[RMDB]
RNA sequence: GGGAACGACUCGAGUAGAGUCGAAAAAUAGGCUUAUCAAGAGAGGUGGAGGGACUGGCCCGAUGAAACCCGGCAGCCCGAAAUGGUGCCAAUUCCUGCAGCGGAAACGUUGAAAGAUGAGCCGAUGGAAGGGCAGACUUCGGUCUGCCCAAAAGAAACAACAACAACAAC
Reactivity to 2A3 in 0.01 (KOAc 150mM, MgCl2 10mM, bicine 150mM(pH8.5), 24C), signal-to-noise 1, nucleotides 027 to 129: a000u060a030g000g000c000u020u000a010u060c010a110a000g100a040g010a130g020g060u010g000g040a020g010g000g000a000c020u000g020g060c020c000c000g060a120u110g050a020a020a000c010c000c000g000g000c030a020g080c000c000c000g000a070a020a050u100g000g030u100g020c000c000a000a030u010u000c010c000u000g040c040a000g000c000g000g050a120a000a000c030g010u040u010g040a050a000a000g010a030u000g000a000g050c070c000g030a060u080g050g000a080a090
Reactivity to DMS in 0.01 (KOAc 150mM, MgCl2 10mM, bicine 150mM(pH8.5), 24C), signal-to-noise 2, nucleotides 027 to 129: a230u050a110g000g100c020u070u040a090u040c060a130a210g010a240g000a090g180g000u070g020g080a050g010g030g040a150c090u100g000g110c000c000c040g000a070u010g000a110a120a060c110c020c030g020g090c010a100g000c080c100c100g040a060a080a130u000g000g000u000g070c000c000a000a090u030u030c000c020u050g000c080a030g050c050g110g000a020a210a130c060g060u030u050g000a120a160a000g050a000u040g050a120g080c030c060g070a070u010g000g000a040a010

This 170-nucleotide RNA was probed chemically with 2A3 and DMS. Values cover nucleotides 27 to 129. For DMS the reverse transcriptase was MarathonRT.